[RMDB]
RNA sequence: GGGAACGACUCGAGUAGAGUCGAAAAAGACCACCUCUACGGAGGUGGUCAAGUCACGUAGCUAGUACCAGGUUGCAAUACUAGAGCGUUAGUCCUGGGGCGUACGGUGGCAGUACGCUGCCUCCGAUAAAACUUGAAUACUUCGGUAUUCAAGUAAGUCGAAAUAAGAGUUCGCUCUUAUUUCGACAAAAGAAACAACAACAACAAC
Reactivity to 2A3 in 0.01 (KOAc 150mM, MgCl2 10mM, bicine 150mM(pH8.5), 24C), signal-to-noise 3, nucleotides 027 to 156: a000g010a010c000c000a000c010c000u010c010u020a060c300g060g010a010g000g020u000g040g000u000c010a000a000g030u020c020a000c030g010u010a030g080c000u010a010g000u020a180c010c010a020g000g020u020u000g000c010a020a010u010a010c000u000a000g000a020g030c140g110u120u200a010g030u070c000c010u010g000g000g020g080c130g070u190a080c010g010g000u010g010g000c000a000g000u030a030c220g020c080u000g000c000c000u000c000c010g020a020u120a060a080a000a010c010u010u010g000a000a000u000a000c000u010u010c030g100g000u000a010u000u000c000a000a000g000u000a010a010
Reactivity to DMS in 0.01 (KOAc 150mM, MgCl2 10mM, bicine 150mM(pH8.5), 24C), signal-to-noise 2, nucleotides 027 to 156: a140g030a050c000c000a020c020c010u050c030u000a140c280g050g010a050g000g010u000g000g000u000c000a000a010g010u020c080a080c010g000u000a080g010c010u010a000g010u000a050c000c010a050g010g000u000u000g000c020a090a070u010a010c010u000a040g020a300g010c040g000u000u010a080g000u000c020c000u000g000g020g010g000c130g000u000a080c060g000g020u000g010g050c030a080g020u000a050c150g010c020u000g020c000c000u020c010c010g030a150u000a030a090a150a090c000u000u010g000a020a030u000a000c010u000u000c300g060g050u010a010u010u000c010a010a010g000u000a010a070

Conditions: 150 mM KOAc, 10 mM MgCl2 and 150 mM bicine (pH 8.5), 24 C. This 207-nucleotide RNA was probed chemically with 2A3 and DMS. For 2A3, 3,161 sequencing reads were counted. 2A3 is a SHAPE reagent: it acylates the 2'-hydroxyl of flexible nucleotides of all four kinds. Reactivities are rounded to 0.1 and cut off at 0 and 3. The DMS profile rests on 3,135 reads.